Source: RMDB library RNAMAK, as collected in RNAgym. Chemical mapping of a 207-nucleotide RNA with 2A3 and DMS. The RNA was probed in 150 mM KOAc, 10 mM MgCl2 and 150 mM bicine (pH 8.5) at 24 C.

RNA sequence: GGGAACGACUCGAGUAGAGUCGAAAAUCCUAAGUCUUCUGACCUUGGAUUUAGAGCAGGGAGCGAUGUCGGAAACGACAUCGCAUCGAUCUGCUCUUGUCAGGUCGAGAAGAUAUGGAAAAAGUAAAACGACUUUGGUUCGCCAAAGUCGUUUUACCGUUCAAUCCAUGUUCGCAUGGAUUGAACGAAAAGAAACAACAACAACAAC
Reactivity to 2A3 in 0.01 (KOAc 150mM, MgCl2 10mM, bicine 150mM(pH8.5), 24C), signal-to-noise 3, nucleotides 027 to 156: u040c010c000u020a090a070g020u000c000u000u000c000u010g010a000c000c000u080u180g210g010a070u300u280u200a000g000a000g010c000a000g010g020g050a030g000c010g000a000u000g000u000c020g030g000a090a030a080c010g000a000c010a030u000c010g010c020a060u050c020g020a030u010c000u000g000c000u000c000u000u000g000u000c000a000g010g000u000c020g000a010g000a000a000g010a000u040a100u070g040g030a050a110a070a040a010g030u040a000a050a000a000c000g040a000c010u000u000u010g030g010u050u080c220g040c110c010a000a000a000g000u000c000g000u000u000u000u010a000c000
Reactivity to DMS in 0.01 (KOAc 150mM, MgCl2 10mM, bicine 150mM(pH8.5), 24C), signal-to-noise 1, nucleotides 027 to 156: u000c000c000u000a100a170g010u000c000u000u000c040u010g020a010c020c020u000u000g050g050a010u000u000u020a020g000a030g020c030a030g010g000g030a120g020c000g010a000u000g010u030c020g040g000a210a130a280c000g040a010c000a000u000c010g050c000a020u000c120g000a030u010c000u000g010c000u000c020u000u010g000u000c000a040g020g000u000c000g000a040g010a030a020g010a030u000a130u010g020g000a050a050a060a090a110g020u000a000a000a040a040c000g000a050c010u000u000u000g010g040u000u000c300g020c030c010a040a010a000g020u010c000g000u000u000u020u000a000c010